Chemical mapping of a 177-nucleotide RNA with 2A3 and DMS. It was measured as part of the RMDB library OK2TRN. For DMS, 2,691 sequencing reads were counted. The reactions ran in a buffer of 150 mM KOAc, 10 mM MgCl2 and 150 mM bicine (pH 8.5), at 24 C.

RNA sequence: GGGAACGACUCGAGUAGAGUCGAAAAGGUAGUAAUCUUGAUGGAACUGUCGUCAAAGUUGGUGACUACGGUGUUCUUAUUCGUAUUGAUGGAACCGACAAUAUUGUUGGAUUAUGCCAUAAGUCCAAUCCUCAGGUAGUUUCGACUACCUGAGGAUAAAAGAAACAACAACAACAAC
Reactivity to 2A3 in 0.01 (KOAc 150mM, MgCl2 10mM, bicine 150mM(pH8.5), 24C), signal-to-noise 2, nucleotides 027 to 126: g000g000u050a070g060u030a100a010u030c040u060u210g060a030u080g040g020a040a040c030u050g010u010c020g000u030c030a120a060a050g110u150u140g110g050u050g030a030c020u030a000c060g030g020u050g070u060u020c010u080u150a080u060u080c050g050u080a080u130u170g050a050u050g000g080a040a050c020c010g040a040c010a030a060u110a050u120u250g040u040u080g000g010a020u000u030a010u050g020c010c020a040u040a140a010g060u000c000c000a000
Reactivity to DMS in 0.01 (KOAc 150mM, MgCl2 10mM, bicine 150mM(pH8.5), 24C), signal-to-noise 3, nucleotides 027 to 126: g000g030u000a040g010u000a040a040u000c020u000u000g060a050u010g000g000a050a070c090u000g010u000c050g020u000c080a030a120a160g010u000u000g010g010u020g000a090c040u000a020c100g020g000u000g010u000u000c070u000u000a110u010u000c060g010u000a090u010u010g000a040u000g000g000a090a120c060c030g000a060c040a050a060u010a080u000u000g010u010u000g010g020a050u000u000a020u000g010c010c010a120u010a110a120g010u000c010c020a100